About this RNA: Chemical mapping of a 177-nucleotide RNA with DMS and 2A3. The reactions ran in a buffer of 150 mM KOAc, 10 mM MgCl2 and 150 mM bicine (pH 8.5), at 24 C. It was measured as part of the RMDB library M2PK90. The DMS profile rests on 4,866 reads. Reactivities are given for positions 27 through 126.
RNA sequence: GGGAACGACUCGAGUAGAGUCGAAAAGCCGUGCUCGAGAGGGUGCAGAAAAUGCAGAGCUAUCCCGUCGUUUCGCUAAACAAAUGCGAAACGACAAAUUGCGUUACAUACGCAAUCCUCUAAUGAAAUGGAGAGUAUCUUUCGAGAUACUCUCCAUAAAAGAAACAACAACAACAAC
Reactivity to DMS in 0.01 (KOAc 150mM, MgCl2 10mM, bicine 150mM(pH8.5), 24C), signal-to-noise 5, nucleotides 027 to 126: g030c060c080g020u010g010c020u000c020g000a060g020a020g000g020g080u000g010c010a040g010a100a050a100a090u000g010c040a040g000a040g000c010u000a150u000c010c000c010g030u000c000g010u000u000u000c010g020c000u000a040a110a110c300a060a080a070u000g020c000g000a010a000a010c000g010a000c000a000a020a060u000u000g000c000g010u000u010a090c280a150u010a040c010g000c000a010a010u000c010c020u000c000u000a150a100u030g000a080a080
Reactivity to 2A3 in 0.01 (KOAc 150mM, MgCl2 10mM, bicine 150mM(pH8.5), 24C), signal-to-noise 5, nucleotides 027 to 126: g060c040c020g060u070g000c010u020c020g060a040g010a010g050g000g020u010g000c020a010g150a050a290a010a020u050g000c030a030g020a010g020c000u020a050u030c010c020c000g000u000c000g000u000u010u000c010g000c020u050a160a190a120c070a040a120a010u110g010c000g000a000a000a000c000g000a000c000a010a130a000u020u000g000c000g000u010u100a200c070a130u240a030c030g000c000a000a010u000c010c000u060c020u070a090a170u180g090a210a120